[RMDB]
RNA sequence: GGGAACGACUCGAGUAGAGUCGAAAAAGAGAAGAUGGGAAAGAUUGGGUGCUCUCUCUUCUAACAGGGACUCUGGCUAUAGUAUUAGAGGGUACAGGAGUUCUUGGCUAUGACUCUCCAGGAAGCCGCUAUUAUAAUAGUUCGCUAUUAUAAUAGCAAAAGAAACAACAACAACAAC
Reactivity to 2A3 in 0.01 (KOAc 150mM, MgCl2 10mM, bicine 150mM(pH8.5), 24C), signal-to-noise 4, nucleotides 027 to 126: a000g090a010g010a040a010g020a040u160g020g030g030a020a060a070g070a090u140u220g090g030g040u070g020c010u000c000u000c000u000c000u050u010c010u000a050a050c010a010g050g000g030a020c010u000c020u070g030g000c030u090a050u070a220g050u010a060u090u070a080g070a070g140g070g010u070a090c030a040g040g020a030g040u010u020c000u010u030g020g000c010u040a040u160g020a040c000u010c010u050c040c010a020g070g030a040a030g060c060c070
Reactivity to DMS in 0.01 (KOAc 150mM, MgCl2 10mM, bicine 150mM(pH8.5), 24C), signal-to-noise 6, nucleotides 027 to 126: a090g000a070g010a050a040g000a040u010g010g000g000a060a090a080g000a150u000u010g010g000g010u000g010c080u000c020u000c010u010c030u010u010c030u000a080a110c070a040g000g010g000a050c060u000c010u010g010g020c160u000a100u010a100g010u000a080u000u010a080g010a100g010g000g000u000a050c070a150g010g000a060g010u000u000c010u000u000g010g010c110u010a070u010g000a080c050u000c020u000c030c030a080g010g010a070a100g010c130c120